Record summary:
Chemical mapping of a 207-nucleotide RNA with DMS and 2A3.
[RMDB]
RNA sequence: GGGAACGACUCGAGUAGAGUCGAAAACACUCCUUCGGGAGUGCGUAAGGGGUCGGACGCCACGAGGUGCUAGACAUGCUGAAGCCUCCACGGCAACAGCUAGCACUCCCCACCGUGGGUCCGACGGAGGCACCCGAAUAACCCUCUUCGGAGGGAAUAUGUAAUACGGUUUCGACCGUAUUACAUAAAAAGAAACAACAACAACAAC
Reactivity to DMS in 0.01 (KOAc 150mM, MgCl2 10mM, bicine 150mM(pH8.5), 24C), signal-to-noise 3, nucleotides 027 to 156: c010a000c000u000c000c000u010u000c260g030g030g000a030g020u010g010c010g080u000a170a090g010g020g020g010u000c030g010g030a040c020g010c010c030a040c000g010a300g010g010u000g020c000u000a050g000a070c040a120u000g030c010u000g030a090a190g000c010c010u010c020c050a300c060g000g000c000a130a130c010a110g000c010u010a040g010c000a040c010u000c300c030c030c040a300c060c040g020u000g010g000g000u000c020c000g010a000c010g030g010a090g040g030c040a130c010c010c020g000a130a120u010a070a180c000c000c010u000c020u000u020c240g010g000a030g040g090g030a030a010
Reactivity to 2A3 in 0.01 (KOAc 150mM, MgCl2 10mM, bicine 150mM(pH8.5), 24C), signal-to-noise 4, nucleotides 027 to 156: c010a000c000u000c010c030u050u100c180g090g010g010a030g010u020g010c030g030u100a120a130g060g020g080g010u010c020g010g010a040c150g140c210c000a010c000g010a020g000g020u000g000c000u000a000g020a080c100a300u300g000c000u010g020a110a040g000c000c000u000c000c010a030c020g020g000c010a060a040c080a180g100c000u000a000g010c000a010c010u020c040c000c010c010a030c000c000g000u000g000g000g010u000c000c000g000a000c020g000g000a000g000g000c010a030c000c000c010g000a020a030u200a130a100c010c030c020u010c010u040u060c240g120g000a000g000g000g000a000a020